[RMDB]
This 207-nucleotide RNA was probed chemically with 2A3. For 2A3 the reverse transcriptase was SuperScript II with manganese.
RNA sequence: GGGAACGACUCGAGUAGAGUCGAAAAAGCUGAAACAGGGUUUUCACCCUUCCUUUCUUCUGGUUUCCUUCCUCUGCUUCAGCGGCCUCGCCCGGAACCUCUUGACCAGCGCAGGUGCUGACGCGACCGGUGGCAUCACCGAGUUGCUCGAGCCUCACUCAUUUGAUGUGUUCGCACAUCAAAUGAGAAAAGAAACAACAACAACAAC
Reactivity to 2A3 in 0.01 (KOAc 150mM, MgCl2 10mM, bicine 150mM(pH8.5), 24C), signal-to-noise 1, nucleotides 027 to 156: a000g030c020u030g020a010a000a070c250a170g030g040g070u170u150u200u280c140a030c030c020c000u010u020c030c010u050u050u010c020u050u000c000u060g080g000u010u060u000c050c000u000u100c030c030u040c050u010g010c000u010u060c010a000g020c010g170g010c020c030u050c050g000c000c030c090g010g010a110a070c060c040u100c050u200u160g090a070c000c060a010g000c010g000c060a010g000g040u020g030c010u010g000a020c030g000c010g050a000c020c010g000g000u020g020g000c110a230u240c000a210c000c020g010a120g060u000u030g020c000u020c030g040a010g010c000c030u040c000a030

Background
The RNA was probed in 150 mM KOAc, 10 mM MgCl2 and 150 mM bicine (pH 8.5) at 24 C.